[RMDB]
RNA sequence: GGGAACGACUCGAGUAGAGUCGAAAAGCCUGGCGCAUGGAGGCGCGUGGUGACUUGUUCCUAGCCGUGGGAUGUGAACGUUUGUUUGCGAUGGCUUUGGGGAAUGCGACCACUACGCUAUAAGGUGGGAGCAAGUCGGGGGAUCCUUGCGGCUCACGUUGAGUAAUGGCUUCGGCCAUUACUCGACAAAAGAAACAACAACAACAAC
Reactivity to DMS in 0.01 (KOAc 150mM, MgCl2 10mM, bicine 150mM(pH8.5), 24C), signal-to-noise 1, nucleotides 027 to 156: g020c010c010u000g020g010c020g040c050a120u000g000g010a140g070g010c030g020c040g040u000g020g000u000g020a070c110u010u000g010u000u000c000c000u010a050g020c000c000g070u000g030g000g020a090u000g040u000g010a040a060c040g020u000u000u010g030u000u000u010g010c030g010a150u010g010g010c020u000u000u010g010g000g000g000a080a100u000g000c030g020a180c030c010a060c090u000a130c130g030c040u010a150u010a100a130g010g050u000g010g000g000a190g020c010a050a070g000u000c020g010g010g000g060g020a070u020c060c000u000u010g070c000g010g030c020u010c020a070c280
Reactivity to 2A3 in 0.01 (KOAc 150mM, MgCl2 10mM, bicine 150mM(pH8.5), 24C), signal-to-noise 4, nucleotides 027 to 156: g010c000c010u030g150g010c020g000c050a070u100g050g060a060g050g020c020g000c010g040u050g000g010u050g010a080c060u030u060g000u020u020c010c010u010a030g040c010c010g010u030g030g000g040a050u070g040u020g050a040a020c040g020u010u040u160g040u000u020u020g050c040g010a020u040g030g000c000u040u030u030g020g010g000g010a030a060u090g000c020g040a030c000c010a010c020u050a030c030g030c060u080a050u040a260a060g010g010u010g000g010g000a020g000c010a030a000g020u030c030g010g000g000g000g000a000u010c000c000u010u090g000c000g010g000c010u010c000a020c090

An RNA of 207 nucleotides, treated with DMS and 2A3 and read out base by base. DMS adducts were read by reverse transcription with MarathonRT. The reactions ran in a buffer of 150 mM KOAc, 10 mM MgCl2 and 150 mM bicine (pH 8.5), at 24 C. The 2A3 profile rests on 4,045 reads. 2A3 adducts were read by reverse transcription with SuperScript II with manganese. It was measured as part of the RMDB library OK3TST.